RNA sequence: GGGAACGACUCGAGUAGAGUCGAAAAUUAUUAUGGCGAUCGCGCCGAUCCAUGGGACUAUAGUGUUAGCGAACGUAGAUUUGAUCGUAGUAUCUAUGAACCUAGUUAUGAUAAAUACACUAGCGACAAAACAACCUAUUCAUCGGCGUAUAAUAACCAUACCCUUAAACUUCGGUUUAAGGGUAUGAAAAGAAACAACAACAACAAC
Reactivity to 2A3 in 0.01 (KOAc 150mM, MgCl2 10mM, bicine 150mM(pH8.5), 24C), signal-to-noise 6, nucleotides 027 to 156: u080u050a050u070u060a100u120g100g070c100g060a050u100c040g020c000g010c010c000g000a010u000c020c010a020u020g010g000g020a050c070u100a110u100a250g080u080g040u090u040a070g050c060g070a050a060c040g020u030a030g030a120u030u030u170g090a100u120c030g060u090a080g020u050a060u030c020u020a040u080g050a050a070c020c030u010a020g020u040u050a040u050g090a100u090a130a140a010u060a040c040a000c030u010a010g010c000g110a100c060a000a100a010a010c010a020a060c000c000u010a010u040u030c020a000u010c010g000g000c000g010u030a010u020a020a020u050a030a010c020
Reactivity to DMS in 0.01 (KOAc 150mM, MgCl2 10mM, bicine 150mM(pH8.5), 24C), signal-to-noise 3, nucleotides 027 to 156: u000u000a030u010u010a040u000g030g060c020g000a110u010c100g000c010g030c000c000g020a040u000c010c020a040u000g040g020g000a160c080u000a170u000a100g020u000g000u010u000a110g030c060g000a090a110c060g000u000a050g020a090u000u000u000g000a100u010c100g030u010a130g040u010a060u000c030u000a080u000g010a020a160c120c030u010a040g030u000u000a050u000g010a140u000a070a050a100u000a100c050a020c020u000a050g020c070g010a260c070a060a040a060a150c050a080a140c000c000u000a040u000u000c030a030u000c020g000g030c010g020u000a050u010a030a100u010a060a110c160